[RMDB]
RNA sequence: GGGAACGACUCGAGUAGAGUCGAAAAGCGCGUGUGGUUGAAUCCGCAACGCAUGGAAUCUCUGAAUGUCAGCGUGCAGGACAUUAUCGCGGCAUUACAACAGCAGAACGUGCAGGCGGCAGCAGGGCCACGUUUGUGCAUUCGUGCACAAACGUGGAAAAGAAACAACAACAACAAC
Reactivity to 2A3 in 0.01 (KOAc 150mM, MgCl2 10mM, bicine 150mM(pH8.5), 24C), signal-to-noise 2, nucleotides 027 to 126: g030c060g000c010g000u050g060u070g000g180u110u160g140a070a150u030c000c010g000c030a060a050c080g010c010a010u030g020g000a100a150u110c060u000c050u120g110a110a040u070g020u080c050a020g010c000g000u030g050c060a060g000g190a120c020a120u220u180a120u140c030g010c000g010g000c000a010u040u090a090c060a250a000c010a020g130c040a010g010a160a100c020g020u020g000c000a040g140g000c000g020g020c020a000g000c000a020g000g070g000
Reactivity to DMS in 0.01 (KOAc 150mM, MgCl2 10mM, bicine 150mM(pH8.5), 24C), signal-to-noise 1, nucleotides 027 to 126: g010c110g010c050g000u020g020u010g030g000u000u000g000a160a200u010c010c000g000c050a090a060c110g020c020a050u000g010g020a150a090u010c020u000c030u000g010a070a010u000g040u010c020a130g000c040g030u000g010c080a080g000g020a150c170a080u020u000a080u020c040g020c030g020g010c060a010u000u010a040c170a040a070c050a100g010c080a100g020a050a040c060g000u000g000c020a090g000g010c000g000g000c120a030g010c020a060g020g020g040